[RMDB]
RNA sequence: GGGAACGACUCGAGUAGAGUCGAAAAUUCGGUCGCCGCGGAUCACUGGCGUCCAGCGGAGAAACAGGAGCUCGACUCCUUCCUUUCGCUGCUGGCUCCACAUCCGAUCGUCGCUGAAGCGCCACGCGGAUAGAAGACUGUUCGCAGUCUUCUAUCCAAAAGAAACAACAACAACAAC
Reactivity to DMS in 0.01 (KOAc 150mM, MgCl2 10mM, bicine 150mM(pH8.5), 24C), signal-to-noise 2, nucleotides 027 to 126: u000u000c020g010g000u010c010g020c050c000g020c020g000g000a030u000c020a030c090u000g000g010c060g000u020c000c000a000g020c010g010g020a060g000a010a010a000c220a020g010g000a010g000c010u020c300g020a160c010u000c000c000u000u000c040c020u000u010u000c010g010c000u000g000c020u000g000g000c010u010c000c000a010c110a020u000c020c010g010a040u000c010g000u010c020g000c010u010g010a020a030g000c140g000c010c020a060c190g000c200
Reactivity to 2A3 in 0.01 (KOAc 150mM, MgCl2 10mM, bicine 150mM(pH8.5), 24C), signal-to-noise 3, nucleotides 027 to 126: u000u000c010g020g060u210c040g000c000c000g030c010g010g000a000u000c000a020c020u000g010g010c020g080u130c010c000a000g010c010g030g010a030g010a020a030a100c300a110g000g000a010g000c040u160c300g280a300c200u020c030c000u000u030c010c010u000u020u010c020g000c000u010g030c000u000g000g000c000u000c000c020a060c010a020u000c010c010g020a270u010c000g010u000c000g000c020u020g010a020a020g020c050g000c050c010a050c050g070c060

The record gives the reactivity of an RNA of 177 nucleotides to DMS and 2A3. The data come from the RNA Mapping Database (RMDB), library VIROID. The 2A3 profile rests on 2,966 reads.